[RMDB]
RNA sequence: GGGAACGACUCGAGUAGAGUCGAAAAACUUAAUCAAAACUUAGGAUGGGAGGCCUUACAAGCACAAGUGCAUUUUUGGAGAUAAAGGUGAGCAUGUUUGUAAUCCUAACUGCUCCAAAGAAACCAGGGUAUGAGAUUGACAAAUAUACGCAGAUGGCAUGUAACAUUCCUUCGGGAAUGUUACAUGAAAAGAAACAACAACAACAAC
Reactivity to DMS in 0.01 (KOAc 150mM, MgCl2 10mM, bicine 150mM(pH8.5), 24C), signal-to-noise 2, nucleotides 027 to 156: a090c080u000u000a020a130u020c070a090a060a090a100c180u010u000a080g020g000a060u000g010g000g040a110g050g020c010c000u030u000a030c060a050a090g000c030a040c050a070a080g010u000g000c060a140u000u000u020u000u010g000g020a110g000a100u000a100a080a100g000g020u010g020a280g050c010a110u000g040u020u010u000g070u000a090a040u000c010c010u000a040a130c090u000g010c020u010c010c020a020a060a120g020a070a080a080c050c030a060g000g010g010u000a070u010g000a060g000a040u000u000g010a110c060a040a030a040u010a130u000a030c060g030c030a110g000a110u000g010g010
Reactivity to 2A3 in 0.01 (KOAc 150mM, MgCl2 10mM, bicine 150mM(pH8.5), 24C), signal-to-noise 3, nucleotides 027 to 156: a000c060u080u120a040a070u160c060a060a040a040a060c020u120u130a040g040g000a010u080g010g000g030a050g000g000c010c000u050u050a060c060a110a040g020c020a030c020a140a060g040u030g010c050a100u010u000u040u070u120g030g000a040g000a010u120a120a140a020g020g000u050g010a030g050c010a020u130g120u130u120u000g030u080a040a020u030c020c000u010a040a050c040u150g010c000u000c000c030a030a030a030g060a010a030a020c040c050a010g040g020g020u120a070u090g030a060g040a080u040u090g000a000c010a000a070a000u150a010u010a050c040g010c060a010g000a050u080g030g000

Annotation:
This 207-nucleotide RNA was probed chemically with DMS and 2A3. Conditions: 150 mM KOAc, 10 mM MgCl2 and 150 mM bicine (pH 8.5), 24 C. Reactivities are given for positions 27 through 156. For DMS, 2,358 sequencing reads were counted. DMS adducts were read by reverse transcription with MarathonRT.